Background:
An RNA of 177 nucleotides, treated with DMS and 2A3 and read out base by base. It was measured as part of the RMDB library OK1LIB. The 2A3 profile rests on 791 reads. Values cover nucleotides 27 to 126. The RNA was probed in 150 mM KOAc, 10 mM MgCl2 and 150 mM bicine (pH 8.5) at 24 C. The DMS profile rests on 1,392 reads.
RNA sequence: GGGAACGACUCGAGUAGAGUCGAAAAGAGCGUCGAGAGACGAAGAGAAGUGCAUAGAUCCACAACGGAGAACGUAAUAAUGCACACCUGUGGUUUAGUGUCCGGAACAACGGGCACAAGAGGCAGAACUCGGAUACCUCUUCGGAGGUAUCCGAGUAAAAGAAACAACAACAACAAC
Reactivity to DMS in 0.01 (KOAc 150mM, MgCl2 10mM, bicine 150mM(pH8.5), 24C), signal-to-noise 2, nucleotides 027 to 126: g100a100g000c000g000u000c000g040a130g000a220g000a010c020g000a080a120g000a140g000a090a150g000u020g000c000a050u010a160g030a130u000c000c000a060c150a080a040c090g000g000a280g010a060a080c070g000u030a090a070u010a020a140u000g000c020a000c030a090c210c000u050g000u010g000g000u000u000u020a090g000u000g000u000c000c020g090g000a020a060c300a220a090c000g040g000g080c010a000c000a050a040g040a150g000g000c020a000g050a140
Reactivity to 2A3 in 0.01 (KOAc 150mM, MgCl2 10mM, bicine 150mM(pH8.5), 24C), signal-to-noise 1, nucleotides 027 to 126: g050a000g070c030g000u040c020g000a040g000a000g000a010c030g010a020a010g030a000g090a260a000g010u010g000c000a010u000a070g090a160u000c000c000a060c060a290a140c060g000g110a030g010a090a000c050g060u110a060a030u050a120a000u190g000c090a060c000a000c000c000u010g020u020g010g130u000u090u000a120g000u000g000u000c000c030g000g000a000a050c010a000a140c130g000g000g000c000a000c000a000a000g050a070g000g000c000a040g000a020